RNA sequence: GGGAACGACUCGAGUAGAGUCGAAAAGGGUUAUCACUCGUAAUCUUCUGCUUGCAGGAGGCCCGUUCUUCAGGCAUCUGUCUGUUGAACAACCCCGCGUUCCUCACGGUUCGCACCCCCUUCCCAUCACAGACCAGCCUUUCGAGGCUGGUCUGUGAAAAGAAACAACAACAACAAC
Reactivity to 2A3 in 0.01 (KOAc 150mM, MgCl2 10mM, bicine 150mM(pH8.5), 24C), signal-to-noise 1, nucleotides 027 to 126: g000g000g050u010u070a120u190c090a110c180u120c220g030u060a040a030u010c000u000u000c000u050g030c090u150u180g020c010a060g000g000a000g000g030c020c050c020g030u010u000c000u000u000c000a000g010g000c000a240u070c250u260g020u070c070u030g070u000u030g000a000a050c030a000a100c000c030c040c020g040c000g000u000u060c000c030u100c030a000c020g060g050u020u060c010g000c000a080c000c050c000c010c000u000u010c020c000c000a000u060
An RNA of 177 nucleotides, treated with 2A3 and read out base by base. The 2A3 profile rests on 499 reads. The reactions ran in a buffer of 150 mM KOAc, 10 mM MgCl2 and 150 mM bicine (pH 8.5), at 24 C.